[RMDB]
RNA sequence: GGGAACGACUCGAGUAGAGUCGAAAAUAAGCAAAAGACAACCACCUUUCCCGCUGACAAUAGCGUUAUCCCUCUGCACUUCGUUAAUAUGAGGGCACAGUAAAUCCCGCAAGGAUGAGAAUGUGAUUAAACAGUUACAGCUUCGGCUGUAACUGAACAUACAAGAAAAGUUCGCUUUUCUUGUAUGAAAAGAAACAACAACAACAAC
Reactivity to 2A3 in 0.01 (KOAc 150mM, MgCl2 10mM, bicine 150mM(pH8.5), 24C), signal-to-noise 8, nucleotides 027 to 156: u110a020a020g060c050a030a070a030a040g120a110c070a070a050c050c040a080c030c050u020u030u030c000c010c010g030c060u050g020a060c080a180a190u120a140g050c020g020u050u050a050u050c000c000c000u010c010u030g020c050a060c120u120u090c080g120u080u110a060a030u090a120u280g010a010g000g000g000c000a000c000a000g000u010a000a030a020u000c010c010c010g100c090a020a030g010g010a000u000g000a010g010a020a020u010g000u010g010a020u070u240a090a110a040c000a000g000u000u000a000c000a000g000c000u050u080c170g050g000c000u000g000u000a000a000c000u000g000a000a000
Reactivity to DMS in 0.01 (KOAc 150mM, MgCl2 10mM, bicine 150mM(pH8.5), 24C), signal-to-noise 5, nucleotides 027 to 156: u000a090a130g030c050a070a040a080a110g000a150c050a100a090c030c020a120c050c020u000u000u000c020c040c020g010c090u010g000a090c090a070a120u000a070g020c050g010u000u000a100u000c020c000c000u000c020u010g010c040a150c100u000u000c110g010u000u010a070a100u010a050u010g000a050g030g020g020c020a020c020a060g000u000a060a100a090u000c000c000c040g030c140a060a160g020g010a080u020g000a090g010a070a090u000g020u010g000a130u010u000a090a110a160c000a030g010u000u000a010c000a020g000c000u000u000c300g050g000c000u000g020u000a000a010c000u010g010a030a120